[RMDB]
RNA sequence: GGGAACGACUCGAGUAGAGUCGAAAAGAUAUGGAGCUGAACUACGUGAUUAUAGGCGUUGAAAUCGGAAACGAUGGAGCCUAGAAUCACGCAGCUCCUAAGUCAAACUGAUGCUUCGGCAUCAGAACUGUUAUACCCUCUUCGGAGGGUAUAACAGAAAAGAAACAACAACAACAAC
Reactivity to DMS in 0.01 (KOAc 150mM, MgCl2 10mM, bicine 150mM(pH8.5), 24C), signal-to-noise 2, nucleotides 027 to 126: g020a050u000a300u020g000g020a030g020c000u000g000a130a050c100u000a240c010g030u000g000a020u000u000a040u000a000g020g010c020g020u010u020g000a120a170a010u000c000g000g000a150a040a210c000g020a030u000g000g020a140g000c000c000u000a010g000a020a040u000c020a000c000g000c030a000g010c000u000c000c000u020a000a050g000u000c020a080a080a300c000u000g000a010u010g000c000u010u000c280g020g000c020a000u000c000a000g000a050a130
Reactivity to 2A3 in 0.01 (KOAc 150mM, MgCl2 10mM, bicine 150mM(pH8.5), 24C), signal-to-noise 2, nucleotides 027 to 126: g030a000u060a050u180g010g000a000g000c040u020g000a050a080c080u140a040c300g000u000g000a000u020u040a020u020a040g000g020c020g060u070u070g040a030a050a030u020c020g010g020a070a050a050c020g010a000u010g000g070a000g000c000c000u010a000g000a000a010u030c000a000c020g000c010a010g010c000u000c000c000u000a050a000g000u000c020a080a070a090c010u000g010a010u020g000c020u060u060c300g080g000c000a010u010c000a000g000a050a000